[RMDB]
RNA sequence: GGGAACGACUCGAGUAGAGUCGAAAACUGCUCAUGCUCCCUAUGAACUGAACUCACCAGAAUCUAGAGGGCAAGGGGAGUCUUGGUGGAGGCUGUAAAGGUCAGCCUAUUUAAGCAUAGAGCCAGAUAAUAAAUCCCACUUCGGUGGGAUUUAUUAAAAAGAAACAACAACAACAAC
Reactivity to DMS in 0.01 (KOAc 150mM, MgCl2 10mM, bicine 150mM(pH8.5), 24C), signal-to-noise 2, nucleotides 027 to 126: c040u000g010c010u000c000a090u000g000c010u000c030c040c030u000a070u020g010a070a220c040u000g010a090a120c090u010c070a090c070c010a020g000a150a100u000c020u000a070g000a090g010g000g000c060a010a120g010g000g010g010a100g000u000c040u010u000g020g000u000g020g020a070g010g010c020u010g000u010a040a100a110g030g010u000c000a020g020c020c000u000a050u010u010u010a070a110g000c060a090u000a050g020a100g020c030c090a070g020a260